[RMDB]
RNA sequence: GGGAACGACUCGAGUAGAGUCGAAAAUUGGUCUGCCUAGAGACACUUUAGGGGUUUGCCUGCACCAUGCCUAACCCUGCCACAGUGUUCAUUGCAUGCACUGGUGGGUCAGCCCCAGGAGGAGGCCUACCAAGAGGGAAUUCGUUCCCUCUUGGUAAAAAGAAACAACAACAACAAC
Reactivity to DMS in 0.01 (KOAc 150mM, MgCl2 10mM, bicine 150mM(pH8.5), 24C), signal-to-noise 7, nucleotides 027 to 126: u000u010g010g010u000c030u000g010c020c030u000a100g010a130g000a100c090a080c080u000u000u010a130g010g010g000g000u000u000u000g010c040c030u000g020c050a070c130c050a060u000g000c020c090u000a060a080c030c030c010u000g000c070c090a080c080a040g000u000g010u000u000c160a120u010u010g010c100a160u000g010c040a060c070u010g010g020u000g010g010g010u010c110a060g010c020c010c010c020a170g010g000a060g000g010a080g000g010c030c100
Reactivity to 2A3 in 0.01 (KOAc 150mM, MgCl2 10mM, bicine 150mM(pH8.5), 24C), signal-to-noise 6, nucleotides 027 to 126: u060u070g010g000u010c020u080g170c030c020u100a080g010a020g030a150c020a040c150u110u100u170a070g000g020g010g020u020u060u050g020c000c010u020g010c000a030c090c020a060u070g000c000c010u020a030a030c010c020c030u020g070c110c030a170c040a060g010u010g030u090u070c080a090u070u220g050c040a040u040g000c030a030c140u100g070g080u030g020g020g020u050c020a020g030c010c000c000c000a000g040g020a010g020g010a000g010g000c000c010